[RMDB]
RNA sequence: GGGAACGACUCGAGUAGAGUCGAAAAUUCUUGAACUGCAUCUAUUACAGAACUGGUAGUAGUGCUUUUGCUUCCUUGCAAUUGCUUGCAUGCCACUGUACGGCUGGCUCCUUUUUUUUUUCUUCUUUCAUAGUACUUUGUUCGCAAAGUACUAUGAAAAAGAAACAACAACAACAAC
Reactivity to 2A3 in 0.01 (KOAc 150mM, MgCl2 10mM, bicine 150mM(pH8.5), 24C), signal-to-noise 8, nucleotides 027 to 126: u050u020c010u030u120g080a080a060c030u040g010c010a050u040c030u060a080u110u060a040c030a050g140a300a120c100u150g060g000u010a010g010u000a010g050u010g020c000u030u020u010u020g010c010u080u080c040c040u050u080g010c010a030a110u050u050g030c030u020u050g010c020a060u110g020c000c020a030c010u030g020u070a030c040g040g020c020u010g030g010c010u060c010c030u070u040u030u020u010u010u010u010u010u010c020u020u020c020u000u000
Conditions: 150 mM KOAc, 10 mM MgCl2 and 150 mM bicine (pH 8.5), 24 C. The record gives the reactivity of an RNA of 177 nucleotides to 2A3.